[RMDB]
RNA sequence: GGGAACGACUCGAGUAGAGUCGAAAAUCAUUCAUUCUGCGUGAUGAGGAAGUGAGUGGGAGCUGGGAGCUAACACUUGCACUGAUGCCUGAAGGGUUGAGUAGGUAUUUGCCAGAGUGAUUGGAGAGCGGAUGGCAACUUUGACAGAAGAAAUAGACGAUUACGACCUGUUCGCAGGUCGUAAUCGAAAAGAAACAACAACAACAAC
Reactivity to 2A3 in 0.01 (KOAc 150mM, MgCl2 10mM, bicine 150mM(pH8.5), 24C), signal-to-noise 2, nucleotides 027 to 156: u080c020a040u140u030c020a020u010u090c020u070g070c060g060u080g050a070u040g010a010g030g030a090a090g070u030g040a040g020u030g000g010g020a030g020c040u080g060g030g020a030g000c010u060a070a000c020a010c030u010u120g010c000a010c070u100g010a040u060g020c010c020u110g040a080a020g110g010g020u020u060g020a070g060u100a030g040g000u060a110u050u080u060g010c020c010a030g010a010g050u060g030a180u040u070g010g000a040g000a000g000c000g050g000a010u040g020g040c010a020a060c030u070u110u090g070a080c050a020g050a040a010g010a020a190a030u120a080g100a050